About this RNA:
The record gives the reactivity of an RNA of 177 nucleotides to 2A3.
RNA sequence: GGGAACGACUCGAGUAGAGUCGAAAAAGUGAUGGAUGGAGACAUUGGACCAUUUAUCGAAUCAUAUUUAAGACAGACAAUGUCGCACGAUUAAUAUAUAUUUUAAAACCGAGGCUCUAAAAGGGCGCCCUGUGUGUGUCUUCGGACACACACAGGGAAAAGAAACAACAACAACAAC
Reactivity to 2A3 in 0.01 (KOAc 150mM, MgCl2 10mM, bicine 150mM(pH8.5), 24C), signal-to-noise 1, nucleotides 027 to 126: a000g300u300g000a000u040g000g020a000u000g000g000a270g000a150c300a240u110u000g220g000a000c030c000a000u030u050u050a000u000c000g000a000a020u020c000a300u040a170u060u160u040a090a020g060a040c040a000g000a150c060a130a300u060g000u000c080g100c000a040c220g020a000u110u000a150a000u000a000u130a000u000a130u000u190u140u100a000a220a050a000c060c020g000a000g000g000c000u000c000u000a020a120a050a070g060g000g000c050g000

The RNA was probed in 150 mM KOAc, 10 mM MgCl2 and 150 mM bicine (pH 8.5) at 24 C. The data come from the RNA Mapping Database (RMDB), library OK1LIB.